[RMDB]
RNA sequence: GGGAACGACUCGAGUAGAGUCGAAAAUGCAUGCUCGCUGGGCUUACGGGAGAUGGUGAAGAGCGACGAUCAACUGAAGCGCGCACGGUUGGGAGCUCUCACCAUCAGUAAGCCUGUGCUGAAGCGCGCACGGCAACCGAAAGGUGCGGCACGUCGAGCAAUAAAUACUGUUCGCAGUAUUUAUUGCAAAAGAAACAACAACAACAAC
Reactivity to 2A3 in 0.01 (KOAc 150mM, MgCl2 10mM, bicine 150mM(pH8.5), 24C), signal-to-noise 5, nucleotides 027 to 156: u140g030c050a040u100g010c110u160c240g000c010u050g010g000g000c000u010u010a010c020g060g070g110a300g040a050u020g010g020u010g030a160a130g010a030g010c010g130a170c050g010a040u010c010a000a000c000u020g030a170a010g020c010g020c000g000c000a010c020g010g000u000u000g000g020g020a010g000c000u000c000u000c000a000c010c010a000u040c000a010g000u010a010a000g000c000c000u000g000u010g000c000u030g010a140a060g000c000g000c000g000c000a030c010g020g000c010a010a010c010c000g040a090a050a020g000g000u000g010c010g010g000c030a020c060g160u170c080g070a040
Reactivity to DMS in 0.01 (KOAc 150mM, MgCl2 10mM, bicine 150mM(pH8.5), 24C), signal-to-noise 2, nucleotides 027 to 156: u010g020c030a110u000g010c030u000c030g020c000u010g000g000g010c000u010u010a020c020g020g000g010a290g000a020u000g010g000u000g010a080a060g020a040g020c000g020a130c140g010a180u010c020a020a040c020u000g010a080a060g000c020g030c010g010c010a300c030g000g000u000u000g000g000g010a120g040c000u020c000u000c000a080c000c000a000u080c000a020g010u020a020a020g020c000c010u000g000u000g000c020u000g000a060a030g010c020g050c020g020c000a260c010g030g000c000a060a050c030c020g010a110a150a160g040g020u000g000c000g030g000c030a060c100g000u000c050g000a240